[RMDB]
RNA sequence: GGGAACGACUCGAGUAGAGUCGAAAAUCGUGUCGCUCACGAGGAGCGAAGUGUCUAGUCGAAUAGGCCAAUUCAGGACAGUGACGGUGCUCAAGGUACAGCAACAAUGAGUCUCGAGCAUCAGGAAUCCGUUCUGGACGUUCGCGUCUAGAACGGAAAAAGAAACAACAACAACAAC
Reactivity to DMS in 0.01 (KOAc 150mM, MgCl2 10mM, bicine 150mM(pH8.5), 24C), signal-to-noise 5, nucleotides 027 to 126: u030c050g030u020g000u000c020g010c010u000c010a190c140g000a170g020g010a060g000c010g010a020a070g010u030g010u000c010u000a070g010u020c120g000a040a050u010a080g010g030c040c060a080a090u010u010c040a120g000g000a070c050a070g000u010g010a090c000g000g000u000g020c010u000c010a040a040g010g030u030a110c050a060g000c120a120a060c230a080a110u030g000a300g000u010c000u010c040g000a040g000c010a010u000c010a010g010g030a050a090
Reactivity to 2A3 in 0.01 (KOAc 150mM, MgCl2 10mM, bicine 150mM(pH8.5), 24C), signal-to-noise 2, nucleotides 027 to 126: u050c020g040u010g040u010c030g090c030u020c040a040c050g160a020g140g000a000g010c020g020a150a000g050u030g020u000c000u020a050g150u100c040g010a040a030u000a030g020g000c000c000a030a030u090u040c000a010g070g000a050c010a000g020u010g080a040c000g000g000u030g000c010u000c020a000a000g010g000u020a080c030a080g020c010a000a040c000a000a080u110g000a000g020u000c000u000c000g000a000g000c010a010u000c020a010g000g040a000a090
Chemical mapping of a 177-nucleotide RNA with DMS and 2A3. 2A3 adducts were read by reverse transcription with SuperScript II with manganese. The 2A3 profile rests on 5,678 reads. The reactions ran in a buffer of 150 mM KOAc, 10 mM MgCl2 and 150 mM bicine (pH 8.5), at 24 C. Source: RMDB library OK1LIB, as collected in RNAgym. Values cover nucleotides 27 to 126.